[RMDB]
RNA sequence: GGGAACGACUCGAGUAGAGUCGAAAAAUGCCUGGGUCAGAACACAUAAUACAUUCCUUUUUAUAAGCACAAAGAUUCUGAGAAGCACUGCCCCUCCCACGUGUCACACUCUGGGGAGAGAUUAUUGGAAUGCCUCUUGGAUCAGGUAUCUUUGGUACCGUAGUGACGGGUUCGCCCGUCACUACGGAAAAGAAACAACAACAACAAC
Reactivity to 2A3 in 0.01 (KOAc 150mM, MgCl2 10mM, bicine 150mM(pH8.5), 24C), signal-to-noise 2, nucleotides 027 to 156: a000u040g010c000c000u020g020g050g000u100c040a010g160a190a100c170a070c060a170u120a180a060u190a110c010a090u080u150c020c000u180u100u030u060u110a300u140a210a050g040c040a040c000a190a130a080g000a090u120u050c020u030g020a010g000a120a000g010c060a010c120u280g120c070c000c000c000u000c000c040c000a140c050g130u130g080u070c060a100c000a010c140u030c040u080g040g000g050g000a020g040a000g000a050u060u080a060u130u220g080g000a050a020u020g000c000c000u080c010u010u010g050g010a040u030c000a000g000g030u000a080u070c000u060u010u010g020g020u100a080